[RMDB]
RNA sequence: GGGAACGACUCGAGUAGAGUCGAAAAGCCGCGGUCGGGCCGCUCGUCGCUGUCGUGGUGGUGGCGGUCGCGGGCGUCGUGGUAGCUGCCGGCGGGUUGGCAGUGGAACUGCAGCCGGCCAGCGGCAUCAGUACUUCCGAUUCGUCGGAAGUACUGAAAAAGAAACAACAACAACAAC
Reactivity to DMS in 0.01 (KOAc 150mM, MgCl2 10mM, bicine 150mM(pH8.5), 24C), signal-to-noise 2, nucleotides 027 to 126: g020c000c020g040c030g010g020u000c010g000g010g020c090c020g000c000u010c070g030u020c080g000c000u000g020u000c260g010u010g000g020u000g010g010u000g040g030c010g010g010u000c090g010c000g010g000g020c030g010u020c060g020u000g010g030u000a150g010c000u010g020c000c030g020g020c050g010g000g000u010u000g040g020c010a020g020u000g000g010a070a300c020u000g000c010a100g020c010c010g000g010c000c010a010g010c010g030g000c010a060
Reactivity to 2A3 in 0.01 (KOAc 150mM, MgCl2 10mM, bicine 150mM(pH8.5), 24C), signal-to-noise 2, nucleotides 027 to 126: g000c000c000g000c000g020g160u120c000g010g050g190c020c000g050c040u120c050g100u080c030g000c010u030g060u220c100g110u170g180g030u080g040g030u050g000g050c000g030g030u180c130g140c020g290g020g030c000g070u080c040g030u020g000g060u060a030g010c000u000g000c020c020g020g020c070g060g030g020u100u070g160g000c000a000g020u060g080g160a120a010c000u040g000c010a000g060c000c000g080g000c000c020a000g010c000g000g010c000a040
Structure probing data (DMS and 2A3) for a 177-nucleotide construct. Reactivities are given for positions 27 through 126. Source: RMDB library OK2TRN, as collected in RNAgym.